Structure probing data (2A3 and DMS) for a 177-nucleotide construct. The reactions ran in a buffer of 150 mM KOAc, 10 mM MgCl2 and 150 mM bicine (pH 8.5), at 24 C.
RNA sequence: GGGAACGACUCGAGUAGAGUCGAAAACUUCCAGCGUUCGCGCUGGAAGAAAGGCCGAGUAGUGUUGGGUCGCGAAAGGCCAUAAAUCAACAAUGACUCAGAAAAUCGGUAUCUUCGGAUACCGAAACCAUAUGUAAAACUUCGGUUUUACAUAUGGAAAAGAAACAACAACAACAAC
Reactivity to 2A3 in 0.01 (KOAc 150mM, MgCl2 10mM, bicine 150mM(pH8.5), 24C), signal-to-noise 7, nucleotides 027 to 126: c000u000u000c000c000a000g000c000g030u060u080c140g000c000g000c090u010g010g000a000a000g000a010a010a000g000g010c010c000g000a010g000u000a000g000u000g140u190u020g030g010g000u020c000g000c000g020a020a010a010g010g010c000c000a000u000a000a010a000u060c030a000a150c020a030a150u230g010a010c000u010c020a010g090a050a140a010a100u030c000g000g000u010a000u000c000u020u060c200g080g000a000u000a000c000c000g000a000a000a000
Reactivity to DMS in 0.01 (KOAc 150mM, MgCl2 10mM, bicine 150mM(pH8.5), 24C), signal-to-noise 6, nucleotides 027 to 126: c000u000u000c000c000a010g010c010g030u000u010c190g030c010g050c000u000g000g010a000a000g000a020a070a180g010g030c010c000g010a050g000u000a070g000u000g010u010u010g010g010g020u000c000g010c010g000a120a160a170g000g000c010c010a030u000a020a030a130u000c100a080a070c130a070a050u000g000a020c000u000c010a040g010a100a050a110a130u000c000g010g000u000a000u000c000u000u010c170g020g000a010u000a000c000c000g000a000a020a090
The data come from the RNA Mapping Database (RMDB), library M2PK50.